[RMDB]
RNA sequence: GGGAACGACUCGAGUAGAGUCGAAAAUCAACCAAUAAGUCCGCAAACAUGGUGUUCGGCAGGCAGCAACGAACACCCAUCAGACCCCUUUGAUGGCGUUGGUCAUCUGAUCCACAAAAGAGCUGCCCCGUCGUCAGCAUUUCGAUGCUGACGACGGAAAAGAAACAACAACAACAAC
Reactivity to 2A3 in 0.01 (KOAc 150mM, MgCl2 10mM, bicine 150mM(pH8.5), 24C), signal-to-noise 2, nucleotides 027 to 126: u080c020a010a070c010c010a000a060u140a090a040g150u150c090c000g060c110a080a160a060c050a100u040g070g000u000g000u000u000c000g000g020c000a150g060g000c000a000g010c000a070a000c000g000a000a000c000a000c000c000c000a000u040c010a000g160a180c000c000c010c000u120u060u130g010a010u010g100g000c020g050u050u070g020g000u000c000a020u050c270u290g030a090u110c070c070a070c030a020a040a000a000g100a010g060c010u000g030c000c000

An RNA of 177 nucleotides, treated with 2A3 and read out base by base. Values cover nucleotides 27 to 126.